[RMDB]
RNA sequence: GGGAACGACUCGAGUAGAGUCGAAAAGAAAAACCCAACUAAUUAUGUUCAAUCCAUCUUUGACUGCGGACCUGAACUUAGUCCAUCAUAGUACAGAAAUUAUAACGUCUGGAAUAAUCGACUCACAAUCAGUAUGAUAUUUCGAUAUCAUACUGAUAAAAGAAACAACAACAACAAC
Reactivity to 2A3 in 0.01 (KOAc 150mM, MgCl2 10mM, bicine 150mM(pH8.5), 24C), signal-to-noise 9, nucleotides 027 to 126: g090a010a070a010a010a020c020c010c030a030a020c030u110a070a090u250u140a090u230g050u040u060c040a030a040u010c020c030a050u050c120u060u160u160g080a090c070u100g010c050g020g010a040c010c070u050g030a040a040c000u050u080a020g020u000c030c000a030u060c030a040u100a070g030u040a040c010a020g130a040a070a060u290u200a150u120a230a060c080g040u000c020u020g010g050a040a020u110a080a030u090c030g030a030c010u020c050a050c030a030
Reactivity to DMS in 0.01 (KOAc 150mM, MgCl2 10mM, bicine 150mM(pH8.5), 24C), signal-to-noise 6, nucleotides 027 to 126: g020a060a090a080a120a160c020c010c010a110a100c180u020a060a070u020u040a040u020g000u000u010c050a080a120u010c060c040a050u010c050u010u020u020g000a070c100u010g010c120g000g000a090c130c070u000g010a040a040c060u000u010a060g000u010c060c060a060u000c070a090u010a060g010u020a080c030a020g000a050a040a070u010u030a060u030a100a120c260g000u010c020u000g000g020a080a080u010a060a070u010c080g000a040c020u000c050a060c090a120

Conditions: 150 mM KOAc, 10 mM MgCl2 and 150 mM bicine (pH 8.5), 24 C. An RNA of 177 nucleotides, treated with 2A3 and DMS and read out base by base. As a SHAPE reagent, 2A3 marks flexible, mostly unpaired nucleotides at the ribose 2'-OH. For DMS the reverse transcriptase was MarathonRT.